[RMDB]
The record gives the reactivity of an RNA of 170 nucleotides to 2A3 and DMS. For 2A3 the reverse transcriptase was SuperScript II with manganese. The 2A3 profile rests on 7,063 reads. It was measured as part of the RMDB library 15KLIB. Values cover nucleotides 27 to 129.
RNA sequence: GGGAACGACUCGAGUAGAGUCGAAAACAGGUCGGACCGCGAGGAGGUGGAGAUCCCAUGCCGACCCGAAGAGGAAAGGAGGACACGGACGACAAACCGUGAGUUCUAUUGCCCUUUAUUGUUGGGUAGCACACCCCGUUCGCGGGGUGUAAAAGAAACAACAACAACAAC
Reactivity to 2A3 in 0.01 (KOAc 150mM, MgCl2 10mM, bicine 150mM(pH8.5), 24C), signal-to-noise 4, nucleotides 027 to 129: c070a040g000g110u000c000g030g000a100c040c020g000c030g020a040g050g010a000g000g010u060g000g020a070g000a030u080c030c020c000a030u100g040c000c030g020a040c000c000c020g010a000a000g010a000g010g030a020a000a060g040g010a000g000g010a000c000a000c010g030g030a070c030g050a060c110a030a050a020c000c020g000u030g050a030g030u050u050c040u090a150u020u140g060c000c010c000u060u180u090a150u100u180g100u030u030g000g000g020u040a070g050c040
Reactivity to DMS in 0.01 (KOAc 150mM, MgCl2 10mM, bicine 150mM(pH8.5), 24C), signal-to-noise 6, nucleotides 027 to 129: c110a100g000g000u000c040g000g000a130c070c050g050c070g000a070g020g060a060g000g000u030g010g020a090g010a040u000c100c060c040a130u000g030c070c050g020a020c000c020c040g040a090a070g010a000g030g020a020a020a020g030g020a050g020g030a050c050a060c040g010g030a150c130g030a120c290a070a130a060c050c020g020u040g010a150g020u030u030c000u040a090u000u050g000c010c000c000u040u030u020a080u050u020g000u000u040g000g000g040u010a060g000c080
The reactions ran in a buffer of 150 mM KOAc, 10 mM MgCl2 and 150 mM bicine (pH 8.5), at 24 C. DMS adducts were read by reverse transcription with MarathonRT. For DMS, 21,915 sequencing reads were counted.